An RNA of 177 nucleotides, treated with DMS and 2A3 and read out base by base. Conditions: 150 mM KOAc, 10 mM MgCl2 and 150 mM bicine (pH 8.5), 24 C.

RNA sequence: GGGAACGACUCGAGUAGAGUCGAAAAACAUCUGGAGAUGUGGUUCGGUCAUUGAUACCAAUGUCCAAGGAGGAGAUUAUGCCGAGGUAAUCAGAACAACCAAGUCAGAAUGCGAAGAAAUGAUCAAGUGGAAGAUUACUUUCGAGUAAUCUUCCACAAAAGAAACAACAACAACAAC
Reactivity to DMS in 0.01 (KOAc 150mM, MgCl2 10mM, bicine 150mM(pH8.5), 24C), signal-to-noise 3, nucleotides 027 to 126: a050c060a040u010c020u000g040g020a090g000a080u000g010u010g020g020u010u000c090g000g020u000c060a080u000u000g010a200u020a060c080c040a010a070u010g010u000c010c030a140a140g000g000a080g080g000a100g010a070u000u010a050u000g000c050c040g000a110g000g010u010a040a070u020c060a050g010a050a060c130a080a110c010c040a080a080g010u010c100a070g010a090a080u000g010c050g000a060a110g020a080a060a080u010g010a100u000c090a090a130
Reactivity to 2A3 in 0.01 (KOAc 150mM, MgCl2 10mM, bicine 150mM(pH8.5), 24C), signal-to-noise 2, nucleotides 027 to 126: a000c040a000u000c020u070g140g030a100g040a030u070g040u040g130g040u030u090c070g020g010u080c010a040u090u090g060a040u110a120c060c000a000a030u020g040u040c010c050a040a040g110g030a020g030g040a060g030a050u050u050a060u160g070c040c010g050a020g050g000u000a000a030u090c050a020g040a080a010c020a010a030c060c030a020a000g030u020c000a010g040a140a160u090g040c000g020a020a030g050a080a250a060u080g030a100u170c060a120a040